[RMDB]
RNA sequence: GGGAACGACUCGAGUAGAGUCGAAAAGAUGGCGUAUGGGACUCCGGUAUUCACAAUACUGGCUGCGCUGAUUGUAAGUGGAUUUGCACUCUUCAGCUUAGGGGUUAAUCCCUUGGUAGCUUACAAUAUCAUGUUCGUCCAGACGCUGACUACCAGCUAUACUUUGUUCGUUCGCGAACAAAGUAUAAAAAGAAACAACAACAACAAC
Reactivity to 2A3 in 0.01 (KOAc 150mM, MgCl2 10mM, bicine 150mM(pH8.5), 24C), signal-to-noise 7, nucleotides 027 to 156: g080a050u160g010g000c020g000u030a040u070g040g020g030a050c040u010c040c000g020g010u010a020u060u190c120a030c030a150a020u020a020c000u010g020g040c070u080g020c090g000c040u010g020a050u010u020g010u020a010a010g010u050g070g060a130u050u060u190g030c050a120c100u060c050u150u160c070a050g010c050u060u100a020g000g010g000g020u030u100a060a080u170c000c000c000u020u050g050g010u080a040g010c000u010u010a010c000a010a050u040a070u210c070a050u210g060u130u120c040g020u010c020c000a020g010a050c000g010c010u020g030a040c010u030a070c010c010a000g020c010
Reactivity to DMS in 0.01 (KOAc 150mM, MgCl2 10mM, bicine 150mM(pH8.5), 24C), signal-to-noise 3, nucleotides 027 to 156: g000a120u000g010g000c010g060u000a060u010g010g000g000a100c040u000c020c000g010g020u000a020u000u010c190a160c160a200a190u010a020c020u000g010g020c120u000g040c100g020c030u000g000a010u000u010g010u000a030a050g040u000g000g000a120u000u010u000g010c040a180c150u010c060u000u000c060a160g000c050u010u000a050g030g020g010g030u000u020a070a140u000c010c010c040u020u010g010g040u010a160g010c020u000u000a030c040a030a020u000a100u000c040a050u010g020u000u010c080g010u010c020c000a170g010a050c020g010c010u000g000a140c050u000a100c010c000a060g020c160